[RMDB]
RNA sequence: GGGAACGACUCGAGUAGAGUCGAAAAGAUAUGGAACCGAUCAGCUUUUGACGUCCAGGUCGGAAACGAUAUUGGGACGAUAAGCUGUAGAGGUUCCUAAGUCAAAAGGAUGAGUUCGCUCAUCCAAGAUGAAGUAAGCGUUCGCGCUUACUUCAUCAAAAGAAACAACAACAACAAC
Reactivity to DMS in 0.01 (KOAc 150mM, MgCl2 10mM, bicine 150mM(pH8.5), 24C), signal-to-noise 3, nucleotides 027 to 126: g010a070u010a300u000g010g010a000a020c000c000g000a220u020c010a010g000c000u000u000u000u010g000a240c100g010u020c010c000a050g010g020u010c010g000g000a140a060a140c010g020a020u000a090u000u000g030g010g000a030c010g030a140u010a010a020g030c020u000g000u020a030g010a300g010g000u000u000c000c000u000a010a090g010u000c040a040a050a110a110g000g000a000u000g000a030g000u000u000c230g010c000u000c000a000u000c000c000a040a070
Reactivity to 2A3 in 0.01 (KOAc 150mM, MgCl2 10mM, bicine 150mM(pH8.5), 24C), signal-to-noise 2, nucleotides 027 to 126: g030a010u090a020u120g000g010a000a000c010c010g020a120u070c000a010g020c010u210u110u100u230g300a130c000g010u000c020c010a030g000g080u010c010g000g030a040a040a020c000g000a010u040a210u300u300g220g030g000a000c010g000a010u030a040a010g000c000u010g040u140a030g010a050g030g000u000u000c000c000u000a000a000g020u020c020a030a030a080a130g040g000a010u010g010a010g020u090u130c300g070c060u010c000a010u000c000c020a010a010
An RNA of 177 nucleotides, treated with DMS and 2A3 and read out base by base. High DMS reactivity at an A or C suggests that its Watson-Crick edge is free. For DMS, 1,737 sequencing reads were counted. 2A3 adducts were read by reverse transcription with SuperScript II with manganese. Conditions: 150 mM KOAc, 10 mM MgCl2 and 150 mM bicine (pH 8.5), 24 C.